[RMDB]
About this RNA: The record gives the reactivity of an RNA of 177 nucleotides to 2A3 and DMS. Values are in units of 0.01, from 0 to 300, in steps of 10. For 2A3, 1,659 sequencing reads were counted.

RNA sequence: GGGAACGACUCGAGUAGAGUCGAAAAGACACUCAGUUCGCUGAGUGUCAAAUAAAAUCAGCGGUUAAAAACGAGGCGUUAUAACCGCUGAAGGCCUCGUUAAAAGAACCAAGUUCGCUUGGUUCAACAGCCAAAAGUAGUUCGCUACUUUUGGCUGAAAAGAAACAACAACAACAAC
Reactivity to 2A3 in 0.01 (KOAc 150mM, MgCl2 10mM, bicine 150mM(pH8.5), 24C), signal-to-noise 1, nucleotides 027 to 126: g000a000c000a000c000u000c010a000g070u090u080c120g090c130u000g020a000g010u000g010u000c000a000a000a000u010a000a000a000a070u050c010a010g010c010g000g020u020u020a010a070a020a000a010c060g060a110g240g130c090g020u000u060a010u020a040a010c000c000g000c020u000g000a000a010g010g040c000c000u030c070g090u090u230a070a090a040a150g000a010a000c000c000a000a000g000u040u050c090g050c120u000u020g000g000u000u000c000a000a000
Reactivity to DMS in 0.01 (KOAc 150mM, MgCl2 10mM, bicine 150mM(pH8.5), 24C), signal-to-noise 2, nucleotides 027 to 126: g000a010c010a000c000u000c000a000g040u010u000c280g010c000u000g000a000g000u000g000u000c020a000a090a060u000a020a070a100a090u000c000a000g010c000g000g010u000u000a020a030a070a100a010c020g000a200g030g010c100g050u000u010a270u000a010a010c020c000g010c000u000g000a010a020g000g020c040c020u000c180g040u000u010a040a080a100a120g000a010a010c000c000a020a020g000u010u010c270g020c000u000u000g000g010u000u000c010a060a120